Chemical mapping of a 177-nucleotide RNA with 2A3 and DMS. DMS adducts were read by reverse transcription with MarathonRT. Conditions: 150 mM KOAc, 10 mM MgCl2 and 150 mM bicine (pH 8.5), 24 C. Source: RMDB library M2PK90, as collected in RNAgym.

RNA sequence: GGGAACGACUCGAGUAGAGUCGAAAAUAAAACACGUAACGUGAGCACAGCUAGUAGUGCAGCUGGACCGAAACCUGCAGCGAAAGGGAUCAAGACCCUGUUCGCGCAAAAACUAGAGAAAAAAAAACAUCAAUGGAUAGUUCGCUAUCCAUUGAUGAAAAGAAACAACAACAACAAC
Reactivity to 2A3 in 0.01 (KOAc 150mM, MgCl2 10mM, bicine 150mM(pH8.5), 24C), signal-to-noise 3, nucleotides 027 to 126: u090a000a040a010a020c060a010c050g110u190a250a000c060g010u060g040a030g000c020a000c000a060g000c010u010a010g030u010a000g020u050g000c000a010g000c030u030g030g020a080c040c030g030a060a030a010c010c030u020g000c030a090g000c030g000a020a000a000g020g010g010a030u150c090a080a070g150a120c010c000c000u050g220u030u010c000g000c000g010c020a010a070a010a030a020c030u080a010g070a030g150a130a020a010a000a010a000a000a000a010
Reactivity to DMS in 0.01 (KOAc 150mM, MgCl2 10mM, bicine 150mM(pH8.5), 24C), signal-to-noise 4, nucleotides 027 to 126: u010a080a080a140a120c030a020c010g020u010a110a050c110g000u010g010a110g010c080a050c020a050g000c020u000a020g020u010a040g000u000g020c180a060g030c040u000g010g000a150c090c060g000a120a090a060c160c070u000g010c020a160g010c000g000a010a040a020g000g010g020a100u010c250a090a160g000a160c020c010c000u000g020u010u000c000g010c010g000c070a030a020a040a040a030c060u010a050g010a150g040a030a000a000a000a030a060a100a070a170